[RMDB]
Structure probing data (DMS and 2A3) for a 177-nucleotide construct. Conditions: 150 mM KOAc, 10 mM MgCl2 and 150 mM bicine (pH 8.5), 24 C. The DMS profile rests on 1,053 reads.
RNA sequence: GGGAACGACUCGAGUAGAGUCGAAAAAAAGUGAUCCCUUCCUCACCAGGGGCUCAUCUACACCUUUCAUGAACUCUGAAAACAGUCACACUAUAGAGAGGUAAUAUGCCAUGGGCUGUAUUUGGACCACUACGCAUGCUUUCGAGCAUGCGUAGUGAAAAGAAACAACAACAACAAC
Reactivity to DMS in 0.01 (KOAc 150mM, MgCl2 10mM, bicine 150mM(pH8.5), 24C), signal-to-noise 2, nucleotides 027 to 126: a000a050a040g020u020g030a060u000c040c000c010u000u000c030c020u000c100a110c090c070a090g020g000g010g010c120u000c020a030u030c010u000a150c190a060c030c030u000u010u000c070a070u020g020a100a040c120u000c030u010g010a000a040a150a060c080a000g010u000c050a060c160a130c150u000a170u020a090g000a050g000a040g020g020u020a030a110u000a010u000g000c120c020a050u000g000g010g010c020u000g030u010a060u000u000u000g020g010a300c200
Reactivity to 2A3 in 0.01 (KOAc 150mM, MgCl2 10mM, bicine 150mM(pH8.5), 24C), signal-to-noise 1, nucleotides 027 to 126: a000a000a000g040u000g000a130u050c020c000c000u060u040c020c030u080c010a110c070c040a030g000g050g020g070c000u000c000a060u020c020u030a010c020a030c060c000u000u060u050c090a090u090g060a050a030c020u020c010u160g110a000a070a040a030c030a000g010u050c000a000c010a010c130u060a030u210a200g140a000g030a050g000g060u050a040a040u160a070u160g000c040c050a040u030g020g020g030c000u040g070u080a190u050u020u070g000g000a000c030
Record summary: For DMS the reverse transcriptase was MarathonRT. It was measured as part of the RMDB library OK2TRN. For 2A3 the reverse transcriptase was SuperScript II with manganese. Reactivities are given for positions 27 through 126.